[RMDB]
RNA sequence: GGGAACGACUCGAGUAGAGUCGAAAACGAGGUGCGGUAGGCCUCGUUAACAAACCGCAAAAAAAUAGUCGCAAACGACGAAAACUACGCACUCGCAGCUUAAUAACCUGCGCAGAGCCCUUCUCCCAAAACUGAGGUAGGUUCGCCUACCUCAGAAGCAGACUUACUUGUUCGCAAGUAAGUCUGCAAAAGAAACAACAACAACAAC
Reactivity to 2A3 in 0.01 (KOAc 150mM, MgCl2 10mM, bicine 150mM(pH8.5), 24C), signal-to-noise 1, nucleotides 027 to 156: c010g000a030g000g000u090g020c030g060g000u040a030g070g000c010c000u000c010g090u020u010a010a010c010a000a010a020c010c010g050c090a000a000a110a000a000a050a130u130a010g010u000c000g050c160a070a140a190c040g030a010c000g050a070a000a010a000c050u190a020c050g020c010a030c040u000c000g000c010a000g030c000u020u150a030a010u040a070a070c010c010u040g000c020g040c040a020g000a020g060c000c010c000u110u110c050u000c000c000c030a020a120a150a160c030u000g000a000g000g000u000a000g020g000u000u040c150g010c050c000u000a000c000c000u000c000a000g000a000a000